[RMDB]
RNA sequence: GGGAACGACUCGAGUAGAGUCGAAAAUCGACGAGAUCGCCGUGGAUGUCCUCGAGCAUGGCCUUGAUCGUGACGAGCUUGCUGUCGGCUAACUCGGACAUAUAGCAGCCCGUCACACGGAGUUCGUCGAUAUCCUCGAGAUAUUCGAACUCACGCAUCUAGCUGAUGAUUUCGAUCAUCAGCUAGAAAAAGAAACAACAACAACAAC
Reactivity to 2A3 in 0.01 (KOAc 150mM, MgCl2 10mM, bicine 150mM(pH8.5), 24C), signal-to-noise 6, nucleotides 027 to 156: u050c010g030a010c010g000a000g030a130u050c080g040c070c000g040u030g010g050a070u110g050u120c020c040u040c050g020a030g030c070a140u160g060g010c050c020u160u180g060a140u150c130g020u020g020a010c010g010a010g050c030u110u140g010c000u120g000u070c030g060g030c070u050a120a060c050u030c130g070g030a030c030a030u280a010u100a040g020c000a010g000c000c000c010g000u010c010a010c010a000c050g000g000a000g000u020u000c010g000u020c040g020a000u000a020u010c000c000u070c080g160a250g000a080u080a090u090u080c030g010a020a010c010u010c030a100c080g070c040a040
Reactivity to DMS in 0.01 (KOAc 150mM, MgCl2 10mM, bicine 150mM(pH8.5), 24C), signal-to-noise 1, nucleotides 027 to 156: u000c000g030a090c030g010a060g010a060u000c010g010c020c060g030u010g040g010a100u010g030u000c060c030u010c020g000a080g000c000a140u000g020g000c050c070u010u000g010a020u000c060g010u000g050a080c010g010a050g000c070u000u010g020c000u010g050u000c120g020g020c070u000a080a160c110u000c000g000g000a080c040a090u000a110u020a050g020c050a090g070c000c000c000g000u000c030a020c020a050c000g010g000a040g000u000u010c010g030u010c050g010a000u000a020u000c010c030u000c190g030a160g010a060u000a040u000u020c020g020a020a090c030u000c010a120c080g030c050a210

This 207-nucleotide RNA was probed chemically with 2A3 and DMS. Reactivities are given for positions 27 through 156. For 2A3, 4,367 sequencing reads were counted. The DMS profile rests on 3,539 reads. The RNA was probed in 150 mM KOAc, 10 mM MgCl2 and 150 mM bicine (pH 8.5) at 24 C.